[RMDB]
RNA sequence: GGGAACGACUCGAGUAGAGUCGAAAAGAAUGGUGAUGCAGCGAAUCACUCUGCAGUCGUUAAUACCAUCUCGCCUGCAGACAUUGCUAGGUGGUCGUCCCUUGCGGGUAUUUCCAUCACCAUGCCGGAGGCACGAGCCGUUCGCGGCUCGUGCCUCAAAAGAAACAACAACAACAAC
Reactivity to 2A3 in 0.01 (KOAc 150mM, MgCl2 10mM, bicine 150mM(pH8.5), 24C), signal-to-noise 2, nucleotides 027 to 126: g120a030a020u040g000g030u000g020a000u000g070c010a100g040c070g070a020a050u020c000a050c040u170c010u040g000c000a000g000u040c070g020u040u100a050a000u250a260c050c010a110u000c040u040c050g000c000c000u100g000c000a000g010a020c100a050u120u200g010c040u040a010g030g110u130g110g000u160c000g040u130c030c020c020u050u060g030c150g000g020g050u150a180u000u040u040c030c000a000u010c000a000c000c000a000u000g010c000c000g100